[RMDB]
The record gives the reactivity of an RNA of 207 nucleotides to 2A3. The 2A3 profile rests on 1,041 reads.
RNA sequence: GGGAACGACUCGAGUAGAGUCGAAAAGUAAAAGACAUCUGCAGCGCCUACACGGCCCGGUGACAGCUGGGGUCACUGCGUGGAGGUGAGCUGUGUGCGGGACAGGGACAGAUUCCCGCGCUUGCAGCUCCCUAACCCUAAUCCUAACCCUGAGAGACACCACGUAGUGAUUCGUCACUACGUGGUGAAAAGAAACAACAACAACAAC
Reactivity to 2A3 in 0.01 (KOAc 150mM, MgCl2 10mM, bicine 150mM(pH8.5), 24C), signal-to-noise 2, nucleotides 027 to 156: g090u060a040a040a030a060g100a000c030a060u060c020u140g070c020a060g000c030g030c030c010u110a100c080a010c050g100g010c040c080c020g050g040u040g010a090c090a020g070c020u030g000g060g030g000u050c020a010c070u030g040c040g040u090g020g050a010g020g050u230g010a010g020c000u000g010u010g000u000g040c000g000g000g020a010c010a110g130g050g060a010c060a040g070a130u080u030c000c000c020g000c000g000c000u010u180g000c000a000g030c000u010c040c000c000u050a080a070c000c000c000u060a080a060u030c030c030u020a030a060c000c000c020u090g060a140g040a020g060a130